Structure probing data (DMS and 2A3) for a 207-nucleotide construct. Conditions: 150 mM KOAc, 10 mM MgCl2 and 150 mM bicine (pH 8.5), 24 C. For 2A3 the reverse transcriptase was SuperScript II with manganese. Source: RMDB library OK3TST, as collected in RNAgym.
RNA sequence: GGGAACGACUCGAGUAGAGUCGAAAAGCGUGGCGCAUGGAGGCGCGUGCUGACUUGUGCCUACCCGUGCCAUGUGAACCUUUGCCUGCGAUGGCUUUGGGCAAUGCGACCACUACGCUAUAAGGUGGGCGUAAGUCGGGCGAUCCUGGCGGGUCACGUUGAGUAAACGCUUCGGCGUUUACUCGACAAAAGAAACAACAACAACAAC
Reactivity to DMS in 0.01 (KOAc 150mM, MgCl2 10mM, bicine 150mM(pH8.5), 24C), signal-to-noise 3, nucleotides 027 to 156: g000c030g030u000g020g040c000g070c040a110u000g070g020a140g020g020c030g040c050g020u000g020c070u010g000a150c080u010u000g010u000g030c000c010u000a040c020c030c070g030u010g010c010c040a080u010g010u000g000a090a120c030c000u000u010u000g010c010c000u000g020c140g020a140u000g010g010c080u000u000u020g030g050g010c040a040a120u010g010c010g010a110c050c030a010c020u010a230c190g020c080u000a160u000a110a100g010g020u000g000g000g000c000g020u000a040a130g030u000c020g020g050g030c000g000a090u000c000c000u000g000g040c070g000g010g010u000c040a060c080
Reactivity to 2A3 in 0.01 (KOAc 150mM, MgCl2 10mM, bicine 150mM(pH8.5), 24C), signal-to-noise 7, nucleotides 027 to 156: g040c010g000u010g000g000c040g010c070a090u120g040g030a010g040g020c030g000c040g050u130g110c070u080g030a110c040u050u130g010u010g010c000c000u040a090c010c000c020g030u030g000c000c000a040u080g000u000g020a050a060c010c000u040u090u110g010c010c010u060g030c110g090a100u090g150g010c000u090u070u100g050g000g000c020a040a060u160g020c040g030a020c010c000a010c010u080a040c080g040c120u120a090u040a300a100g020g000u010g000g010g000c000g010u010a060a020g000u010c020g000g000g000c010g010a000u030c000c000u020g040g030c000g020g030g010u040c050a030c060